About this RNA: Structure probing data (2A3) for a 207-nucleotide construct. It was measured as part of the RMDB library M2RFPK. The 2A3 profile rests on 1,243 reads.
RNA sequence: GGGAACGACUCGAGUAGAGUCGAAAACGGGGUUGGAUCCGACUCUCAUAGGCUCUCCUACCCAACUCCUACUCAAUACGUCCUCGUCGUACAGAACGGUAACAUGUUUUCCGAACAUCCGCGCUUGCAAACCUGCCAAAGUUCGCUUUGGCAGGAACUCGUGUUUCUAGUUCGCUAGAAACACGAGAAAAGAAACAACAACAACAAC
Reactivity to 2A3 in 0.01 (KOAc 150mM, MgCl2 10mM, bicine 150mM(pH8.5), 24C), signal-to-noise 2, nucleotides 027 to 156: c060g000g000g030g000u040u020g020g020a090u300c000c010g070a070c030u070c020u050c160a140u170a150g000g000c000u000c000u000c010c020u010a020c000c000c000a010a020c020u020c000c010u000a010c010u010c030a060a120u050a140c100g040u030c030c030u040c010g080u030c040g000u050a050c030a080g060a030a050c030g000g020u050a060a020c030a140u100g040u070u010u030u090c080c040g000a050a000c020a020u080c050c030g050c000g000c050u000u040g010c040a020a120a220c000c000u000g010c000c000a000a000a000g000u060u070c140g060c120u000u000u000g000g000c010a000g000g000a000a000
Values cover nucleotides 27 to 156.